RNA sequence: GGGAACGACUCGAGUAGAGUCGAAAACGAUAGGUCAGAGGCUGGUUUUUACGCAGGCAGCUAAGGCCGCCAAUCCCGGCGCAAUUACCGUUCACGAGGCCCAGGGGGCUACGUUUACUGAGACUACUCUCGAAAUGGAAUUCGUUCCAUUUCGAGAAAAAGAAACAACAACAACAAC
Reactivity to 2A3 in 0.01 (KOAc 150mM, MgCl2 10mM, bicine 150mM(pH8.5), 24C), signal-to-noise 1, nucleotides 027 to 126: c050g090a170u090a030g070g030u010c010a020g030a080g140g020c030u060g090g150u060u050u000u080u060a100c110g010c040a040g070g000c000a000g000c000u000a050a080g050g000c030c000g000c010c000a010a110u070c020c000c000g040g030c040g000c010a010a040u110u060a120c010c010g070u060u090c040a010c090g030a010g060g000c040c010c020a130g100g030g000g020g070c000u020a010c060g030u000u060u060a090c040u060g010a000g030a030c020u120a090c020
Reactivity to DMS in 0.01 (KOAc 150mM, MgCl2 10mM, bicine 150mM(pH8.5), 24C), signal-to-noise 2, nucleotides 027 to 126: c040g020a150u000a030g020g020u000c030a070g000a200g000g010c040u000g000g000u010u000u000u010u000a060c140g020c150a030g000g010c040a020g020c020u010a080a210g070g000c000c010g010c030c060a120a170u010c000c030c030g010g000c020g010c040a040a060u010u000a040c020c060g030u000u000c070a070c130g010a300g000g000c020c030c070a170g000g010g010g010g030c060u000a040c040g000u010u000u000a060c110u010g010a170g010a060c040u010a040c190